[RMDB]
RNA sequence: GGGAACGACUCGAGUAGAGUCGAAAAAGCGAUUCGUUCUGCGAACCGUGGCCGACCGCCAGAUAAGCGUUCAUUCCCAGUUCGCGCAUCUGCUGUUCGCCGAUCACGCGGGUGAUAACCUUUUUGCGGCUGAAAGGGAAUUCGUUCCCUUUCAGCCAAAAGAAACAACAACAACAAC
Reactivity to DMS in 0.01 (KOAc 150mM, MgCl2 10mM, bicine 150mM(pH8.5), 24C), signal-to-noise 1, nucleotides 027 to 126: a070g000c050g010a040u010u020c040g000u020u050c100u010g010c140g000a120a140c010c060g030u010g000g000c110c080g000a030c030c010g000c050c010a090g000a040u010a040a230g000c070g010u050u000c000a090u030u000c000c010c000a160g000u000u000c010g030c030g000c300a020u000c030u000g030c000u000g000u000u000c160g030c010c000g000a050u020c060a050c040g030c140g090g000g030u000g000a000u010a060a190c150c020u000u000u000u000u010g000c300
Reactivity to 2A3 in 0.01 (KOAc 150mM, MgCl2 10mM, bicine 150mM(pH8.5), 24C), signal-to-noise 2, nucleotides 027 to 126: a010g110c060g000a050u060u050c040g030u140u040c050u110g020c000g000a040a050c010c010g060u100g010g050c000c040g010a060c010c010g040c050c010a000g010a020u040a000a050g020c000g010u020u000c010a040u020u000c010c000c000a000g030u030u030c000g000c010g000c060a020u000c000u030g040c000u010g050u080u020c040g010c020c000g020a070u040c020a010c060g050c030g010g040g000u120g030a120u040a180a130c020c000u010u020u030u080u140g110c010